Notes:
The record gives the reactivity of an RNA of 207 nucleotides to 2A3. The RNA was probed in 150 mM KOAc, 10 mM MgCl2 and 150 mM bicine (pH 8.5) at 24 C. Values cover nucleotides 27 to 156. Reactivities are rounded to 0.1 and cut off at 0 and 3. Source: RMDB library ARCHII, as collected in RNAgym.
[RMDB]
RNA sequence: GGGAACGACUCGAGUAGAGUCGAAAAGCUAUGAGGAUGACUCAUAGUGCAGCAGGUGCGGAUAACGCCCACCGGAUGGUAAUAACGAAUAGGAUGACCUUAGUACCUCCACAUAACAUAAUAACAAAAGGUCACAAUGGGCAAUCCGCAGCCAAGCCAAGUCGAUGAUGUUCGCAUCAUCGACUUGAAAAGAAACAACAACAACAAC
Reactivity to 2A3 in 0.01 (KOAc 150mM, MgCl2 10mM, bicine 150mM(pH8.5), 24C), signal-to-noise 1, nucleotides 027 to 156: g000c000u010a010u000g000a010g030g020a060u140g040a120c010u010c000a000u000a000g120u160g010c000a000g030c000a010g000g030u010g000c000g030g000a000u070a070a140c060g000c000c000c000a020c000c000g000g090a200u120g010g110u070a020a230u090a300a070c000g020a170a160u030a040g110g120a210u030g000a010c000c000u030u030a010g000u140a060c000c010u080c140c020a100c000a080u090a100a040c030a050u240a170a060u090a070a030c030a000a090a000a000g010g020u000c010a000c000a030a000u040g000g000g060c000a010a010u000c000c000g000c010a000g000c000c000a080a000g010c000